[RMDB]
Conditions: 150 mM KOAc, 10 mM MgCl2 and 150 mM bicine (pH 8.5), 24 C. The record gives the reactivity of an RNA of 177 nucleotides to 2A3 and DMS. The DMS profile rests on 1,531 reads. For 2A3 the reverse transcriptase was SuperScript II with manganese. For DMS the reverse transcriptase was MarathonRT. For 2A3, 1,048 sequencing reads were counted.

RNA sequence: GGGAACGACUCGAGUAGAGUCGAAAAUGACACACCUUCAGGGCAGUAGCACAGGAGAGAUGUCUGUGCUGAUUUUUAUGCAAUCCUUUCUGGAAGUGAUGCCACCUUAGAAGCUGCAACUUAGAGAAGCAAAUGUCAGAUUCGUCUGACAUUUGCUAAAAGAAACAACAACAACAAC
Reactivity to 2A3 in 0.01 (KOAc 150mM, MgCl2 10mM, bicine 150mM(pH8.5), 24C), signal-to-noise 1, nucleotides 027 to 126: u090g030a010c020a000c010a010c090c010u050u080c040a000g000g070g000c060a090g030u170a000g000c000a000c010a030g050g040a070g000a000g030a130u300g080u070c020u010g010u000g000c000u020g010a040u000u000u000u080u100a170u110g000c020a040a090u030c020c030u080u160u050c010u000g100g040a050a070g010u020g080a070u040g000c000c010a090c030c040u070u100a090g000a100a000g030c050u000g010c060a040a090c020u070u070a020g000a000g050a260
Reactivity to DMS in 0.01 (KOAc 150mM, MgCl2 10mM, bicine 150mM(pH8.5), 24C), signal-to-noise 2, nucleotides 027 to 126: u010g020a070c080a070c020a090c050c030u000u000c070a060g010g000g030c090a080g010u000a030g000c010a030c030a040g010g010a020g000a190g010a090u000g000u000c030u000g000u000g010c010u010g000a020u010u000u020u000u010a080u060g010c100a040a100u010c050c070u000u010u010c020u000g010g010a080a040g030u000g000a130u000g000c010c010a050c020c040u000u000a060g010a100a080g000c060u000g000c080a080a090c090u000u000a090g010a120g000a160